[RMDB]
RNA sequence: GGGAACGACUCGAGUAGAGUCGAAAAAUAAGAAAGGAGAGCGGACAGGUGGGCAAGCUGGGGUAAUGCAGGCUUAUGUUACGCCUCUAACCGAUGAUGAUAUCUCUGAUCUGGCAGCCUAUUAUGCAUUCUUGGUAAUUUUCGAAUUACCAAGAAUAAAAGAAACAACAACAACAAC
Reactivity to 2A3 in 0.01 (KOAc 150mM, MgCl2 10mM, bicine 150mM(pH8.5), 24C), signal-to-noise 4, nucleotides 027 to 126: a000u150a040a050g050a060a060a010g050g020a040g000a000g050c030g010g020a030c010a020g040g030u050g030g020g000c040a030a020g020c020u040g010g080g020g020u060a070a030u100g050c040a000g030g000c000u090u080a060u110g080u040u060a070c040g000c010c000u020c010u010a060a030c020c020g030a040u080g020a020u060g020a040u070a100u180c050u000c010u030g050a050u030c020u000g020g010c030a010g010c010c010u070a110u220u090a050u120g060c020
Reactivity to DMS in 0.01 (KOAc 150mM, MgCl2 10mM, bicine 150mM(pH8.5), 24C), signal-to-noise 8, nucleotides 027 to 126: a070u000a090a070g000a070a100a190g000g010a060g010a080g020c050g020g020a080c120a060g010g020u000g010g010g010c050a050a050g010c050u000g010g020g010g020u010a050a070u010g010c100a080g010g010c020u010u000a060u010g010u000u000a080c130g010c020c020u000c040u010a100a090c040c040g000a080u010g010a090u000g000a070u010a120u000c030u000c030u000g000a150u000c020u000g000g000c060a080g000c020c030u000a070u010u000a080u010g010c170